RNA sequence: GGGAACGACUCGAGUAGAGUCGAAAAUUAGGUUUGAAAUCGAUUGAUGUCUUAGCGAUUCCCGGCGACCUCGGUGACAGAUUUGGGUUUUGUAUUCCCGAUUUGGCCGUUUGGGAUAAUCCUAGCGUGUCAUUGUGCAAUUCGUUGCACAAUGACAAAAAGAAACAACAACAACAAC
Reactivity to DMS in 0.01 (KOAc 150mM, MgCl2 10mM, bicine 150mM(pH8.5), 24C), signal-to-noise 2, nucleotides 027 to 126: u010u020a030g010g020u000u020u020g000a000a110a020u000c030g010a060u000u030g000a070u010g010u010c000u010u000a110g000c000g000a050u020u000c000c000c000g000g010c060g000a030c040c010u020c030g000g000u010g010a070c020a020g010a040u010u010u000g030g010g000u020u010u010u030g030u020a110u020u010c040c000c000g000a040u030u030u000g000g000c030c000g000u010u030u090g050g010g020a130u010a030a100u000c000c020u000a030g020c160g000
Reactivity to 2A3 in 0.01 (KOAc 150mM, MgCl2 10mM, bicine 150mM(pH8.5), 24C), signal-to-noise 5, nucleotides 027 to 126: u110u030a030g060g160u020u090u190g140a060a070a040u080c090g050a070u030u290g140a130u190g040u080c040u130u180a000g020c000g030a040u040u000c000c000c000g000g040c040g010a040c010c020u010c010g000g010u090g140a040c040a020g080a030u040u180u300g030g010g020u150u080u030u100g250u130a180u140u130c030c000c000g000a010u040u010u020g010g000c010c020g070u040u090u170g010g000g000a030u040a040a030u030c010c010u020a020g100c110g110

This 177-nucleotide RNA was probed chemically with DMS and 2A3. Conditions: 150 mM KOAc, 10 mM MgCl2 and 150 mM bicine (pH 8.5), 24 C. The 2A3 profile rests on 2,097 reads. Source: RMDB library OK1LIB, as collected in RNAgym. For DMS, 4,398 sequencing reads were counted.